[RMDB]
RNA sequence: GGGAACGACUCGAGUAGAGUCGAAAAAGUGGAAUAGACUCUCCUGUAGCUACAUAUCUUAUGAUGAAAAGAGGCUGUCAGGUUAUUGCUUUAUAUUGUGAUAAUGAGCCUUAUACUUCUCCUGAGGGGUGAGGGACUACUUCGGUAGUCCCUCACCAAAAGAAACAACAACAACAAC
Reactivity to 2A3 in 0.01 (KOAc 150mM, MgCl2 10mM, bicine 150mM(pH8.5), 24C), signal-to-noise 1, nucleotides 027 to 126: a000g020u050g080g130a040a070u050a000g020a070c000u000c000u040c000c000u000g030u090a000g000c000u050a030c030a290u120a030u170c000u020u170a200u300g230a130u030g130a020a020a030a030g090a070g000g000c000u020g180u300c020a120g110g000u000u000a100u000u000g030c000u070u120u110a220u220a020u030u230g000u000g000a000u020a010a080u230g000a000g020c000c000u100u000a030u000a100c000u050u000c050u000c070c000u010g000a020g000g010